[RMDB]
RNA sequence: GGGAACGACUCGAGUAGAGUCGAAAAGUCUGAGUAAUCGGCUUUGAGAUUUCCGUUCUAAGAUUAACUGGGAUACUUCAGUGGAGCAAUCCAGCAGAGAUCCAGUUGCCGUGGGUAUGGCGGUGGGAUAGCAACAAAGUGGUAUAUGUUAUGGAAGGUAUAUACAUCUCUUCGGAGAUGUAUAUACAAAAGAAACAACAACAACAAC
Reactivity to 2A3 in 0.01 (KOAc 150mM, MgCl2 10mM, bicine 150mM(pH8.5), 24C), signal-to-noise 4, nucleotides 027 to 156: g020u030c090u130g020a000g080u180a070a120u060c020g010g010c000u020u010u060g070a120g010a060u040u030u040c020c020g020u100u050c050u130a100a090g010a250u190u070a030a020c020u030g010g060g020a030u100a230c010u050u050c020a050g040u040g010g000a020g010c040a030a120u000c000c020a030g020c030a010g020a000g000a030u000c000c010a000g020u000u020g000c000c010g040u070g030g020g010u090a080u050g040g000c050g060g020u100g020g020g010a050u090a110g030c000a020a090c010a050a180a000g040u030g030g020u040a050u010a040u130g060u100u080a060u070g040g030a030a020g110
Reactivity to DMS in 0.01 (KOAc 150mM, MgCl2 10mM, bicine 150mM(pH8.5), 24C), signal-to-noise 2, nucleotides 027 to 156: g000u000c020u010g040a080g010u010a140a100u000c020g030g010c010u000u030u000g000a160g010a300u000u000u010c000c010g000u000u010c020u000a060a130g010a150u000u020a030a060c020u020g000g000g010a100u000a030c010u010u000c000a250g010u000g010g000a030g030c040a060a110u010c010c010a010g010c030a130g000a170g010a060u010c030c030a100g000u000u000g030c030c090g050u000g000g010g020u000a100u000g020g010c090g000g010u010g000g010g000a110u000a070g010c040a060a070c080a040a090a090g030u000g010g000u000a070u000a070u000g010u010u010a080u000g010g010a150a120g010

Structure probing data (2A3 and DMS) for a 207-nucleotide construct.
For 2A3 the reverse transcriptase was SuperScript II with manganese.
The RNA was probed in 150 mM KOAc, 10 mM MgCl2 and 150 mM bicine (pH 8.5) at 24 C.
For DMS, 5,011 sequencing reads were counted.
Source: RMDB library ARCHII, as collected in RNAgym.